[RMDB]
RNA sequence: GGGAACGACUCGAGUAGAGUCGAAAAGAUAUGGAGUGUAAGGGAGUCGCUCGGAAACGAGGCGACGAAGAACUUAUCACUCCUAAGUCAAAAGGUAGUGAAUCGGGUUCGCCCGAUUCACUACCAACACAUUAGUAUCGUUCGCGAUACUAAUGUGAAAAGAAACAACAACAACAAC
Reactivity to DMS in 0.01 (KOAc 150mM, MgCl2 10mM, bicine 150mM(pH8.5), 24C), signal-to-noise 7, nucleotides 027 to 126: g010a040u000a300u010g010g000a010g020u000g000u000a010a020g000g000g000a080g010u000c000g020c010u000c000g000g000a100a070a180c010g020a040g010g020c000g020a010c000g000a050a110g000a090a210c010u000u000a020u010c010a010c000u000c000c000u000a020a070g000u000c040a080a070a120a110g010g010u000a000g010u000g000a010a000u000c010g000g000g020u000u010c280g010c000c000c000g000a010u000u000c000a000c000u000a000c000c000a030a070
Reactivity to 2A3 in 0.01 (KOAc 150mM, MgCl2 10mM, bicine 150mM(pH8.5), 24C), signal-to-noise 3, nucleotides 027 to 126: g050a020u070a060u200g000g000a010g000u010g000u000a000a010g000g020g000a020g000u000c000g000c010u030c020g000g030a060a090a040c040g020a060g270g160c010g000a000c000g010a070a020g010a000a000c010u030u030a060u300c020a000c010u010c000c010u020a090a020g030u010c020a050a030a050a120g020g010u000a000g000u000g000a000a010u010c020g000g060g030u110u170c220g030c010c000c000g000a000u000u000c010a010c000u000a000c000c000a000a000